[RMDB]
RNA sequence: GGGAACGACUCGAGUAGAGUCGAAAACCAUAACAGUUCGCUGUUAUGGACUGUCGGAAUGCGGAAUAAUUAAUCGUCCGCUUACGAUAAAUACCGACUAUAAAGCGUAACACUUCGGUGUUACGAACCCUACCCGGUACUUCGGUACCGGGUAGGGAAAAGAAACAACAACAACAAC
Reactivity to DMS in 0.01 (KOAc 150mM, MgCl2 10mM, bicine 150mM(pH8.5), 24C), signal-to-noise 1, nucleotides 027 to 126: c000c000a010u000a020a000c000a030g000u000u070c250g050c000u000g000u000u000a000u000g030g030a050c120u040g020u000c010g030g030a100a100u000g040c000g000g050a050a020u020a130a170u000u000a130a070u000c190g000u000c030c010g020c050u000u000a120c040g020a040u020a050a020a250u000a170c030c000g070a060c170u020a140u000a070a100a020g000c010g010u000a000a000c010a000c000u000u000c150g030g010u000g000u000u000a000c010g000a010a040
Reactivity to 2A3 in 0.01 (KOAc 150mM, MgCl2 10mM, bicine 150mM(pH8.5), 24C), signal-to-noise 2, nucleotides 027 to 126: c010c000a010u010a010a000c020a010g050u080u080c110g120c140u000g000u000u000a000u010g000g010a030c080u040g000u000c000g070g000a140a030u130g000c040g000g120a020a010u120a050a110u230u180a060a090u140c140g000u000c000c020g000c000u010u030a030c010g010a000u040a070a070a010u050a040c010c020g030a010c020u010a030u070a300a150a020g110c010g010u000a010a000c000a010c010u020u070c280g040g000u000g000u010u000a010c000g000a000a010
Conditions: 150 mM KOAc, 10 mM MgCl2 and 150 mM bicine (pH 8.5), 24 C. Chemical mapping of a 177-nucleotide RNA with DMS and 2A3. DMS adducts were read by reverse transcription with MarathonRT. For DMS, 651 sequencing reads were counted.